RNA sequence: GGGAACGACUCGAGUAGAGUCGAAAAUUUGUCUAAAGCUCAAGUAGCUCCUUUUGCUUUGAUUUUCUUCAUCUGUUGCUAUCUCCGCUGCAGGCUACGUUAUGCUGCCCUUUUAGGGUUUGUGCCCAACACUGUAGCUUUUCGAAGCUACAGUGUUAAAAGAAACAACAACAACAAC
Reactivity to 2A3 in 0.01 (KOAc 150mM, MgCl2 10mM, bicine 150mM(pH8.5), 24C), signal-to-noise 6, nucleotides 027 to 126: u080u050u100g040u010c050u080a060a050a020g010c010u000c050a050a040g030u030a030g070c010u110c010c010u030u060u080u070g020c020u080u020u070g070a060u060u090u100u020c020u080u040c020a090u030c060u050g090u090u050g030c030u040a040u090c020u000c060c010g020c010u050g010c030a020g030g000c010u050a040c050g070u060u040a070u200g020c030u030g000c010c000c000u060u110u050u240a100g010g010g000u060u110u060g060u070g030c000c000c010
Reactivity to DMS in 0.01 (KOAc 150mM, MgCl2 10mM, bicine 150mM(pH8.5), 24C), signal-to-noise 4, nucleotides 027 to 126: u020u020u030g000u010c060u030a040a110a070g000c010u000c070a080a040g000u010a100g010c060u010c100c010u000u010u000u020g010c020u020u010u020g010a110u000u010u010u000c020u010u000c070a070u010c070u000g020u000u000g030c050u000a050u000c020u010c060c060g020c020u010g000c070a070g000g000c060u000a060c060g010u010u010a030u020g010c010u000g010c020c010c020u000u020u010u020a090g020g000g020u000u020u010g020u000g000c020c020c020
Chemical mapping of a 177-nucleotide RNA with 2A3 and DMS.
For 2A3 the reverse transcriptase was SuperScript II with manganese.